An RNA of 177 nucleotides, treated with DMS and 2A3 and read out base by base. The RNA was probed in 150 mM KOAc, 10 mM MgCl2 and 150 mM bicine (pH 8.5) at 24 C. For DMS the reverse transcriptase was MarathonRT. Values are in units of 0.01, from 0 to 300, in steps of 10. For 2A3 the reverse transcriptase was SuperScript II with manganese.

[RMDB]
RNA sequence: GGGAACGACUCGAGUAGAGUCGAAAACUAUAGAAGCAUUGAACCAUGGUGUCCAUGUCUUAUGCGAAAAGCCAAUGGCAAUGACGACGGAAGAGUGUGAUCGCAUGAUUGAAGCGGCUAAUAAAAAUGAACAAAAGAUAUUCGUAUCUUUUGUUCAAAAAGAAACAACAACAACAAC
Reactivity to DMS in 0.01 (KOAc 150mM, MgCl2 10mM, bicine 150mM(pH8.5), 24C), signal-to-noise 9, nucleotides 027 to 126: c030u010a090u030a060g010a130a130g000c020a040u000u020g010a070a090c060c020a030u000g000g010u020g010u010c030c030a030u010g010u020c090u020u030a050u010g000c050g010a050a060a080a190g010c010c020a090a080u030g000g010c030a040a040u010g000a120c070g000a110c070g000g010a040a020g000a070g020u000g000u020g010a050u000c050g000c040a040u010g010a100u010u010g000a080a060g010c040g000g000c050u000a040a060u040a030a050a060a070a110
Reactivity to 2A3 in 0.01 (KOAc 150mM, MgCl2 10mM, bicine 150mM(pH8.5), 24C), signal-to-noise 9, nucleotides 027 to 126: c040u050a040u050a300g110a120a010g030c020a020u020u060g030a080a030c030c010a030u040g020g020u070g040u020c030c010a030u040g100u060c090u180u250a050u050g060c080g060a040a070a060a010g010c010c010a080a040u040g020g000c010a020a020u050g080a090c030g010a010c030g020g060a060a020g040a060g070u100g020u050g040a070u050c010g010c050a040u080g040a150u110u150g040a120a020g020c000g010g000c010u020a020a020u150a120a130a030a030a050

For 2A3, 21,815 sequencing reads were counted.